[RMDB]
RNA sequence: GGGAACGACUCGAGUAGAGUCGAAAAUGGAUCUGCAACAACUCCAUAUAUCCGCAGAUCCUAAGGAUGUAUGGGCAACUGAUCCGAGAGGAUCUACAUUAAGGCGAAGGUCAAAUCUACGUUAAUACCGACCUGAAGCCGAAGGUAUUAACGCACAGCGCAUAUAAUGGUUCGCCAUUAUAUGCGCAAAAGAAACAACAACAACAAC
Reactivity to 2A3 in 0.01 (KOAc 150mM, MgCl2 10mM, bicine 150mM(pH8.5), 24C), signal-to-noise 4, nucleotides 027 to 156: u090g010g000a010u020c010u050g030c020a090a060c030a100a070c170u030c060c030a020u050a010u010a010u030c040c020g000c050a020g020a060u030c000c010u030a100a040g010g000a000u010g000u030a010u020g010g010g000c020a070a070c100u060g010a010u000c010c020g020a030g000a020g030g000a010u000c030u080a030c070a170u120u160a080a040g030g000c060g060a060a000g020g020u030c020a010a070a080u090c130u160a060c010g000u000u000a000a000u000a010c000c010g010a030c010c020u060g070a070a010g010c010c000g000a010a000g000g000u000a000u020u000a010a010c000g000c030a050c060a030
Reactivity to DMS in 0.01 (KOAc 150mM, MgCl2 10mM, bicine 150mM(pH8.5), 24C), signal-to-noise 2, nucleotides 027 to 156: u000g010g000a020u000c000u000g030c040a110a160c100a110a150c190u000c000c020a050u000a030u000a050u010c020c030g030c020a020g030a040u000c020c000u020a030a070g000g000a000u000g020u010a000u010g020g020g050c020a080a140c150u030g010a030u000c000c000g030a300g000a300g010g010a030u000c010u000a060c070a100u000u020a090a050g030g010c010g020a150a110g040g010u010c040a050a070a130u000c020u010a030c040g000u000u030a010a000u000a000c030c000g010a220c090c050u020g000a090a130g010c040c020g000a040a220g000g000u000a000u000u010a000a020c020g000c040a060c150a140

Conditions: 150 mM KOAc, 10 mM MgCl2 and 150 mM bicine (pH 8.5), 24 C. Chemical mapping of a 207-nucleotide RNA with 2A3 and DMS. The 2A3 profile rests on 3,985 reads. Values are in units of 0.01, from 0 to 300, in steps of 10. For DMS the reverse transcriptase was MarathonRT.